[RMDB]
RNA sequence: GGGAACGACUCGAGUAGAGUCGAAAAAACCCAUUAGUGCCUACGCAUUUUUAAUGGCCAAGGAUGGAAUAACCAAACUGGCUGAUGUUGAAGCGGACGUCGCAGCACGUGCUGAUGACGAAGGCUUGAAGAGUUGGCUUCGGCCAACUCAAAAGAAACAACAACAACAAC
Reactivity to DMS in 0.01 (KOAc 150mM, MgCl2 10mM, bicine 150mM(pH8.5), 24C), signal-to-noise 4, nucleotides 027 to 129: a100a020c030c000c000a210u040u030a070g010u040g000c000c090u020a150c160g030c020a030u000u000u060u000u010a100a060u040g000g030c000c000a070a070g090g050a200u050g040g000a250a090u050a200a110c000c030a000a050a180c050u000g050g000c000u040g180a120u000g000u040u100g020a080a040g020c000g000g040a300c120g000u030c000g050c010a030g000c030a230c300g040u090g000c070u060g000a050u080g020a000c080g000a010a300g000g000c050u020u020g000a040a110
Reactivity to 2A3 in 0.01 (KOAc 150mM, MgCl2 10mM, bicine 150mM(pH8.5), 24C), signal-to-noise 1, nucleotides 027 to 129: a010a010c000c000c000a000u040u220a010g060u030g060c070c070u070a040c030g000c010a060u000u170u000u000u300a120a000u030g070g000c030c020a020a110g040g000a110u040g000g140a100a100u120a270a000c000c000a000a050a000c000u000g010g020c070u180g140a060u160g030u000u120g260a020a020g030c000g000g000a000c060g000u000c100g000c050a000g170c000a020c250g100u260g000c120u000g000a280u000g000a080c000g000a020a020g000g000c060u000u000g050a080a000

Chemical mapping of a 170-nucleotide RNA with DMS and 2A3.
The DMS profile rests on 3,765 reads.
The data come from the RNA Mapping Database (RMDB), library 15KLIB.
The RNA was probed in 150 mM KOAc, 10 mM MgCl2 and 150 mM bicine (pH 8.5) at 24 C.
Reactivities are given for positions 27 through 129.
For 2A3 the reverse transcriptase was SuperScript II with manganese.